Structure probing data (2A3) for a 207-nucleotide construct. Values cover nucleotides 27 to 156.
RNA sequence: GGGAACGACUCGAGUAGAGUCGAAAAGGGACAAGCUUCUCCCUCUAAGAGUUCACAGUCAAAGCCAGGAAGAAGGACAUGUAAACUGGUAAAUGGUGGAAGCCUGUACUGAUGGGGACGAGGGGUGUGCACUGAACAGCCAAAAAAUCACAGACAAGUUCCUUAUGCACUUCGGUGCAUAAGGAACAAAAGAAACAACAACAACAAC
Reactivity to 2A3 in 0.01 (KOAc 150mM, MgCl2 10mM, bicine 150mM(pH8.5), 24C), signal-to-noise 1, nucleotides 027 to 156: g090g000g030a040c020a040a130g100c000u170u000c040u030c040c110c030u070c010u030a070a090g000a030g130u100u100c010a060c020a130g020u010c020a140a060a020g010c030c000a050g130g010a070a000g070a080a050g010g040a010c000a020u040g070u130a040a040a040c010u000g000g010u020a140a060a060u130g040g020u000g060g040a000a000g040c000c000u040g020u090a010c020u030g060a040u050g000g000g010g000a000c060g010a000g000g000g030g000u040g040u070g020c000a000c070u010g050a080a020c020a000g000c040c000a090a090a000a000a110a090u180c050a010c000a030g250a060c020a070a150
As a SHAPE reagent, 2A3 marks flexible, mostly unpaired nucleotides at the ribose 2'-OH. The RNA was probed in 150 mM KOAc, 10 mM MgCl2 and 150 mM bicine (pH 8.5) at 24 C. For 2A3 the reverse transcriptase was SuperScript II with manganese. Source: RMDB library OK3TST, as collected in RNAgym.